RNA sequence: GGGAACGACUCGAGUAGAGUCGAAAAUCUAACAUCCACGCGAGUGUUCGGGUGUCAAACCCGUGCGCGCAGUGAAAGCGAACGGAGGUGGGAGCCCGCAAGGGUGCACCAUCGACCGAUCCUGAAGUUAAAUUCCAACUUUCGAGUUGGAAUUUAAAAAAGAAACAACAACAACAAC
Reactivity to DMS in 0.01 (KOAc 150mM, MgCl2 10mM, bicine 150mM(pH8.5), 24C), signal-to-noise 9, nucleotides 027 to 126: u020c040u010a080a150c140a110u020c070c030a040c020g010c010g000a070g010u020g020u010u010c000g010g000g020u000g000u040c270a060a110a030c000c000c010g030u010g000c000g000c000g020c030a120g020u000g000a080a080a050g010c140g000a030a090c000g000g010a300g000g010u000g010g010g000a300g000c000c000c010g010c290a110a120g000g000g020u000g000c110a300c010c000a000u000c000g000a100c000c000g000a060u000c010c010u000g010a120a080g020
Reactivity to 2A3 in 0.01 (KOAc 150mM, MgCl2 10mM, bicine 150mM(pH8.5), 24C), signal-to-noise 7, nucleotides 027 to 126: u020c010u030a070a020c020a090u050c040c010a030c020g010c020g020a050g060u140g040u110u060c010g010g020g000u050g160u170c090a090a080a060c000c000c000g000u010g000c020g000c000g000c040a040g000u010g080a120a030a010g100c080g010a020a010c010g000g000a010g000g000u000g000g010g000a020g010c000c000c010g000c060a050a070g010g000g000u030g020c100a060c030c000a000u000c000g070a160c000c000g000a010u020c010c010u050g060a090a020g030